An RNA of 177 nucleotides, treated with DMS and 2A3 and read out base by base. The RNA was probed in 150 mM KOAc, 10 mM MgCl2 and 150 mM bicine (pH 8.5) at 24 C. For 2A3 the reverse transcriptase was SuperScript II with manganese.
RNA sequence: GGGAACGACUCGAGUAGAGUCGAAAAGCAUAGUUGUAGGAGUAGCGACGGUUGGGUACUCCGCGGUAGGAAACGAGGCAUGCAAGUUAAAAUGCUUGCCAACCGAAAGAAAUACUGCAUAUGCGAACCCAAAUAAUUUGUUCGCAAAUUAUUUGGGAAAAGAAACAACAACAACAAC
Reactivity to DMS in 0.01 (KOAc 150mM, MgCl2 10mM, bicine 150mM(pH8.5), 24C), signal-to-noise 5, nucleotides 027 to 126: g010c020a010u010a040g000u020u010g020u040a180g000g000a080g000u000a040g010c070g020a090c100g000g020u030u010g020g000g020u010a000c010u000c010c010g020c030g000g000u000a040g010g020a090a110a060c050g020a170g000g030c040a060u010g020c020a020a070g020u020u060a070a110a090a080u010g000c000u000u010g030c000c150a080a040c050c010g000a120a120a070g020a120a120a090u010a030c010u000g000c010a300u010a010u000g000c010g010a130a110
Reactivity to 2A3 in 0.01 (KOAc 150mM, MgCl2 10mM, bicine 150mM(pH8.5), 24C), signal-to-noise 6, nucleotides 027 to 126: g030c010a020u040a040g080u050u130g040u050a060g010g070a030g030u100a040g100c050g130a110c050g130g100u090u080g110g020g040u040a040c010u050c020c010g000c010g000g010u060a040g000g120a040a100a030c040g020a060g010g040c020a020u080g020c000a030a000g000u090u210a200a200a090a040u180g000c000u010u000g000c000c000a060a060c050c000g060a040a070a020g100a000a060a020u080a030c010u010g000c010a030u030a010u060g020c010g030a120a110